[RMDB]
Description
Chemical mapping of a 207-nucleotide RNA with 2A3. Source: RMDB library M2RFPK, as collected in RNAgym.
RNA sequence: GGGAACGACUCGAGUAGAGUCGAAAACGGUUACGCCUUCUUUACCGUUAUCAAGGAAGGAACUCGGCCAUGCUAAGGGAAGCAUUAUUCCUUAGGCGCAUGUCGCCGCCAGCAUGGUGUGAGGGGAAAAAGUAUGCUGGGUUCGCCCAGCAUACAAGACGCUAUGUUCGUUCGCGAACAUAGCGUCAAAAGAAACAACAACAACAAC
Reactivity to 2A3 in 0.01 (KOAc 150mM, MgCl2 10mM, bicine 150mM(pH8.5), 24C), signal-to-noise 1, nucleotides 027 to 156: c000g010g000u100u030a050c110g100c000c000u000u090c000u000u060u040a110c070c000g290u120u070a050u090c050a010a010g040g010a000a050g010g000a000a000c000u000c000g000g000c000c000a010u000g020c000u110a060a040g050g000g000a010a010g000c030a220u040u140a080u200u090c010c000u030u090a060g000g010c020g040c090a140u240g100u300c010g000c000c030g000c010c040a010g020c000a000u000g030g000u040g240u170g010a040g000g070g000g000a030a060a030a030a030g020u000a000u000g000c000u000g000g000g060u000u000c120g110c040c000c000a000g000c050a000u000a000c000a000a020